[RMDB]
RNA sequence: GGGAACGACUCGAGUAGAGUCGAAAAGGUCGGCGGGGUCAACCUGAGUGUCAUUCAGGAUGCGAAACUCGACGGGAUCGAUGCCCGCUUUUUCCGCCAGUUCGUCGAUCGCGAUUUCGAGCGCCAAGCUAUACGCACGAUUCGUCGUGCGUAUAGCAAAAGAAACAACAACAACAAC
Reactivity to DMS in 0.01 (KOAc 150mM, MgCl2 10mM, bicine 150mM(pH8.5), 24C), signal-to-noise 3, nucleotides 027 to 126: g000g000u000c110g010g010c010g010g040g020g030u000c110a070a090c020c000u010g010a030g030u010g030u000c180a070u010u010c020a040g010g020a130u000g000c080g000a090a090a160c050u000c020g010a070c010g020g000g020a050u010c100g000a080u000g010c080c020c040g000c080u000u000u000u000u000c040c030g020c040c070a160g000u000u000c030g020u000c010g000a010u000c000g010c000g010a210u000u000u000c020g020a050g000c060g000c040c080a100a180
Reactivity to 2A3 in 0.01 (KOAc 150mM, MgCl2 10mM, bicine 150mM(pH8.5), 24C), signal-to-noise 3, nucleotides 027 to 126: g090g020u050c030g030g020c030g000g070g000g010u120c020a080a030c010c010u030g000a020g030u170g230u170c030a050u090u000c010a010g040g030a070u080g040c050g080a100a080a070c030u030c020g060a060c010g030g060g000a030u070c070g010a020u090g090c010c010c080g000c000u090u040u000u040u000c000c020g010c040c000a020g070u100u110c000g020u000c000g000a000u010c060g010c010g200a060u100u080u040c020g020a010g000c020g020c030c010a040a020
Description
Conditions: 150 mM KOAc, 10 mM MgCl2 and 150 mM bicine (pH 8.5), 24 C. Structure probing data (DMS and 2A3) for a 177-nucleotide construct. In probing experiments dimethyl sulfate is read out at A N1 and C N3, which are open when not base-paired.